[RMDB]
RNA sequence: GGGAACGACUCGAGUAGAGUCGAAAACAUCUAUGAGGAAGUUAUCACUUAACCACAAGGAGCAUUAGUUGCCUCCUGAGUUUGAAUUUCAACAGUGAUUCUCAAACCUUGGUAUGUAUAGGAGUGUUUAUUUAAAAAUGAAGAUUUUAGCCCAGCACUACCAAAAUACGUUCGCGUAUUUUGGUAGAAAAGAAACAACAACAACAAC
Reactivity to DMS in 0.01 (KOAc 150mM, MgCl2 10mM, bicine 150mM(pH8.5), 24C), signal-to-noise 2, nucleotides 027 to 156: c030a090u000c050u000a170u020g020a120g030g010a150a090g010u000u000a060u010c020a020c010u010u000a120a110c020c090a100c060a090a020g040g020a050g040c040a090u000u000a120g030u000u000g010c060c050u010c000c000u000g000a070g020u000u010u050g020a160a150u000u010u020c060a060a090c050a070g010u000g000a030u000u000c020u000c030a070a070a090c060c010u000u010g010g020u000a070u010g010u010a130u000a100g010g000a130g020u000g000u000u000u000a100u010u010u010a080a060a070a100a160u000g010a100a140g000a160u000u000u020u000a090g020c020c020c010a120g030c120a180
Reactivity to 2A3 in 0.01 (KOAc 150mM, MgCl2 10mM, bicine 150mM(pH8.5), 24C), signal-to-noise 3, nucleotides 027 to 156: c020a030u070c050u130a090u170g060a040g040g000a120a030g030u080u080a080u060c010a000c040u050u120a100a070c060c050a030c070a140a020g000g010a000g000c010a040u090u140a140g150u250u050g010c030c010u010c000c010u020g010a040g010u060u100u140g010a020a070u070u090u260c070a070a070c010a070g020u000g050a010u110u000c020u010c000a110a110a100c000c000u020u050g090g020u270a140u160g050u010a030u100a180g030g040a040g020u110g020u060u130u030a140u030u160u040a050a110a040a070a050u100g020a030a080g010a020u050u060u100u150a010g000c000c000c000a010g000c040a050
Source information
Source: RMDB library OK3TST, as collected in RNAgym. Chemical mapping of a 207-nucleotide RNA with DMS and 2A3. Reactivities are given for positions 27 through 156. For DMS, 3,497 sequencing reads were counted. DMS adducts were read by reverse transcription with MarathonRT.